[RMDB]
RNA sequence: GGGAACGACUCGAGUAGAGUCGAAAAUGAUCGAGAGAUCUAACGAUGUACGCGAGUCCAGUGCACUGACUCGAGCGAAAGCUCGGUCGAAAGACCGCGUACAUCGGUCGGCAAGUGUACAGUCGACAUGCGUACUCAGUUUCGACUGAGUACGCAUAAAAGAAACAACAACAACAAC
Reactivity to 2A3 in 0.01 (KOAc 150mM, MgCl2 10mM, bicine 150mM(pH8.5), 24C), signal-to-noise 2, nucleotides 027 to 126: u110g000a010u000c020g010a000g010a000g000a100u010c010u010a040a020c010g000a000u010g000u010a000c000g020c000g010a030g020u000c050c020a080g060u040g210c080a030c130u050g000a000c000u030c160g040a000g000c000g040a100a000a000g000c000u000c000g000g010u010c000g010a020a020a010g000a000c010c000g000c000g000u000a000c000a000u010c000g000g000u010c000g010g000c040a150a180g060u050g010u110a070c050a030g000u000c000g010a010c020
Reactivity to DMS in 0.01 (KOAc 150mM, MgCl2 10mM, bicine 150mM(pH8.5), 24C), signal-to-noise 4, nucleotides 027 to 126: u000g010a010u010c000g000a240g000a210g000a010u000c010u010a080a230c000g010a010u000g010u000a010c010g020c010g000a050g010u010c040c250a110g010u000g000c100a040c080u010g000a010c000u000c010g010a010g010c000g020a110a110a210g010c000u010c000g010g010u010c000g000a090a090a140g000a020c000c010g020c000g010u000a010c020a000u000c000g010g000u000c020g020g010c030a040a120g010u000g010u000a030c060a250g010u000c020g010a110c260
An RNA of 177 nucleotides, treated with 2A3 and DMS and read out base by base. It was measured as part of the RMDB library OK2TRN. Values are in units of 0.01, from 0 to 300, in steps of 10. The 2A3 profile rests on 3,689 reads. Values cover nucleotides 27 to 126. The reactions ran in a buffer of 150 mM KOAc, 10 mM MgCl2 and 150 mM bicine (pH 8.5), at 24 C.